RNA sequence: GGGAACGACUCGAGUAGAGUCGAAAAGAUAUGGACCUGAACUACAAGCCGACGUUCGUUGAAAUCGGAAACGAUGGAGAACCAAGGCUUGCAGGUCCUAAGUCAAAGCUUCUCUUCGGAGAAGCAACUUUUGGACUCAGUUCGCUGAGUCCAAAAGAAAAGAAACAACAACAACAAC
Reactivity to DMS in 0.01 (KOAc 150mM, MgCl2 10mM, bicine 150mM(pH8.5), 24C), signal-to-noise 1, nucleotides 027 to 126: g020a060u000a300u020g010g010a030c000c000u000g010a050a020c010u000a300c000a000a000g000c000c000g010a300c300g000u000u030c040g020u040u010g000a150a130a040u020c000g000g000a120a130a140c020g000a020u000g010g000a070g000a000a010c000c050a050a300g000g000c020u000u000g000c000a000g000g000u000c000c000u000a010a050g000u020c070a150a100a170g000c000u000u000c000u000c000u000u010c170g020g000a000g000a000a000g000c000a030a000